The record gives the reactivity of an RNA of 207 nucleotides to 2A3. For 2A3, 1,214 sequencing reads were counted. The reactions ran in a buffer of 150 mM KOAc, 10 mM MgCl2 and 150 mM bicine (pH 8.5), at 24 C. For 2A3 the reverse transcriptase was SuperScript II with manganese.

[RMDB]
RNA sequence: GGGAACGACUCGAGUAGAGUCGAAAAAAUGGCAGGAGCGGCAGACGCUUUCAAGAUCGCGGCCGUCGAGGCGAUCGGCGCGCUCGGCGGGCUCAUCAGCUUGCACAGCGGCGAUCCUGGCACCACCGGGGCGAACGAAAUCAGCGGCGGCAGCUACGUAUCAUUGGCAAUUCGUUGCCAAUGAUACAAAAGAAACAACAACAACAAC
Reactivity to 2A3 in 0.01 (KOAc 150mM, MgCl2 10mM, bicine 150mM(pH8.5), 24C), signal-to-noise 2, nucleotides 027 to 156: a000a010u080g080g000c010a040g020g000a030g010c050g020g000c000a010g070a130c020g000c020u070u070u050c090a060a020g020a080u100c050g010c000g040g020c000c030g020u000c020g000a020g070g110c050g040a050u020c020g080g050c070g000c010g080c030u000c010g030g000c000g000g000g020c030u020c030a060u000c040a040g020c020u040u300g010c130a150c040a180g030c000g020g010c020g000a010u010c020c030u030g000g000c070a180c130c000a000c010c010g000g000g000g010c030g030a180a060c010g000a030a060a040u050c010a020g010c020g050g000c000g020g010c040a030g010c010u050a070c060